[RMDB]
RNA sequence: GGGAACGACUCGAGUAGAGUCGAAAAGGCAUGGCUCAGCUUUGCCUGUGACAUCGGGGAAAAGAGCAAGUGGCUAUUUCUACACUCAGUGUUCAGAAGCCAGUGAGCACUAAGAAUGGUUUGUAGCUUAGAAUUACAGCUUCGGCUGUAAUUCUAAAAAAGAAACAACAACAACAAC
Reactivity to DMS in 0.01 (KOAc 150mM, MgCl2 10mM, bicine 150mM(pH8.5), 24C), signal-to-noise 6, nucleotides 027 to 126: g000g000c010a030u000g000g000c010u050c170a160g000c020u010u020u000g000c020c000u000g000u000g020a080c120a060u020c040g000g000g000g000a090a030a090a060g000a080g010c080a080a110g010u020g000g000c020u000a060u000u010u000c030u020a090c190a090c040u010c060a030g020u000g010u010u000c030a040g000a130a130g010c080c090a070g010u000g010a040g000c000a030c010u000a060a050g000a100a120u030g000g000u010u020u010g000u010a060g000c130
Reactivity to 2A3 in 0.01 (KOAc 150mM, MgCl2 10mM, bicine 150mM(pH8.5), 24C), signal-to-noise 5, nucleotides 027 to 126: g010g000c010a000u060g020g000c010u050c230a050g010c000u070u070u040g040c000c010u020g010u020g020a050c050a050u080c030g000g000g000g030a000a080a040a030g070a030g020c040a080a050g090u030g110g010c000u030a070u050u100u020c030u050a050c020a010c050u070c030a030g000u000g030u030u020c000a020g040a150a050g070c020c030a030g020u020g020a000g020c000a000c000u010a010a040g070a080a060u060g070g070u060u060u050g080u040a020g000c020